RNA sequence: GGGAACGACUCGAGUAGAGUCGAAAAGGUGGUCGACAUAGGAGUUCAUAGGACCAGAGUCCAUAUUGGGGACAAAUGAGUCGAAUCUAUGGGAGAACGGGAAACGAAGCUGGCUGCUUAGACAAAAUCAUCGCUGCAUGUUCGCGUGCAGUGAUGAAAAAGAAACAACAACAACAAC
Reactivity to DMS in 0.01 (KOAc 150mM, MgCl2 10mM, bicine 150mM(pH8.5), 24C), signal-to-noise 9, nucleotides 027 to 126: g000g020u010g010g010u000c020g000a090c070a070u010a080g000g000a140g010u010u010c050a080u020a090g010g010a040c020c040a060g000a300g010u000c010c020a100u040a150u030u030g010g020g010g000a030c030a030a100a100u020g000a080g010u000c010g010a090a090u020c030u000a040u000g000g010g000a080g010a070a070c100g000g000g000a040a070a080c100g000a040a090g010c030u000g000g000c030u010g000c040u000u010a060g000a070c160a050a040a060a110
Reactivity to 2A3 in 0.01 (KOAc 150mM, MgCl2 10mM, bicine 150mM(pH8.5), 24C), signal-to-noise 9, nucleotides 027 to 126: g050g010u040g010g020u040c010g010a040c020a040u110a040g050g030a060g040u060u060c020a030u080a080g070g020a000c000c010a010g020a010g030u000c010c020a030u070a190u240u300g190g030g010g000a010c010a020a250a030u080g010a040g020u000c000g010a010a030u000c010u020a020u030g010g000g010a050g000a010a030c000g010g010g020a020a050a010c030g010a030a010g010c010u020g030g000c010u010g000c010u040u030a040g020a060c040a020a100a010a070